[RMDB]
RNA sequence: GGGAACGACUCGAGUAGAGUCGAAAAAAAUGAUGGUGCCAGGCAGUGAGGAUAAGGCCCAUUGGUUAAGCAUGCCCUCAGUUUGAAUGGGUCAUGUACAAUUAAUAAAGGACUCUUGCUUACAUUGAUCUUCUUGGAGAUUCGUCUCCAAGAAGAUAAAAGAAACAACAACAACAAC
Reactivity to 2A3 in 0.01 (KOAc 150mM, MgCl2 10mM, bicine 150mM(pH8.5), 24C), signal-to-noise 3, nucleotides 027 to 126: a000a000a040u120g050a020u040g000g060u090g020c020c020a020g020g000c030a060g060u030g100a050g060g020a100u040a200a080g050g000c000c000c000a020u010u070g050g000u040u040a070a020g010c000a010u030g000c010c000c000u060c030a130g060u130u250u230g140a160a080u100g030g010g020u150c030a000u000g010u010a020c040a000a070u090u130a040a050u120a130a080a030g060g020a010c000u020c000u040u050g010c010u050u000a020c030a160u050u210g040
Reactivity to DMS in 0.01 (KOAc 150mM, MgCl2 10mM, bicine 150mM(pH8.5), 24C), signal-to-noise 4, nucleotides 027 to 126: a060a060a040u010g000a080u000g000g000u010g030c040c030a100g000g010c040a030g000u010g000a060g000g000a120u020a080a080g000g000c040c010c030a070u000u010g000g020u000u000a110a210g000c000a020u000g000c010c020c010u000c070a190g000u010u010u000g020a100a060u010g000g010g020u000c010a010u000g010u010a070c220a030a060u010u000a050a040u010a080a100a100g010g000a060c010u000c030u000u010g000c030u010u000a060c090a100u010u000g000
This 177-nucleotide RNA was probed chemically with 2A3 and DMS. The 2A3 profile rests on 3,345 reads. It was measured as part of the RMDB library OK2TRN. Conditions: 150 mM KOAc, 10 mM MgCl2 and 150 mM bicine (pH 8.5), 24 C.